Structure probing data (DMS and 2A3) for a 177-nucleotide construct. It was measured as part of the RMDB library TTRINS.
RNA sequence: GGGAACGACUCGAGUAGAGUCGAAAAGAUAUGGAGUAGAGGUGUGUAAUCUUUAGACAUGUGCUAACAUCGGAAACGAUGUGUAGCGAAUCUAAAGAUUACACACUACCCACCUACUCCUAAGUCAGUAUAAGAGUAAGUUCGCUUACUCUUAUACAAAAGAAACAACAACAACAAC
Reactivity to DMS in 0.01 (KOAc 150mM, MgCl2 10mM, bicine 150mM(pH8.5), 24C), signal-to-noise 9, nucleotides 027 to 126: g010a110u010a300u010g000g010a020g010u000a010g000a100g020g000u000g010u000g000u000a000a000u000c000u000u000u000a010g010a020c280a080u010g050u010g020c010u000a020a030c000a010u000c000g010g000a140a100a240c010g030a010u000g010u010g020u000a010g010c000g010a130a160u000c000u000a000a010a010g010a020u000u000a000c000a000c000a000c010u000a020c050c030c070a300c120c010u000a010c010u000c000c000u000a030a100g000u010c110a180
Reactivity to 2A3 in 0.01 (KOAc 150mM, MgCl2 10mM, bicine 150mM(pH8.5), 24C), signal-to-noise 5, nucleotides 027 to 126: g070a020u300a230u300g000g010a010g010u010a000g000a010g050g000u020g000u000g000u010a000a020u010c020u000u020u000a010g020a040c120a210u300g200u280g220c000u000a000a010c000a010u000c010g070g000a120a060a030c000g010a010u010g080u030g290u030a000g000c000g010a060a000u010c010u000a000a000a000g000a000u000u010a000c000a000c000a000c000u000a000c000c010c000a020c000c010u000a010c000u000c010c000u010a070a020g060u040c120a040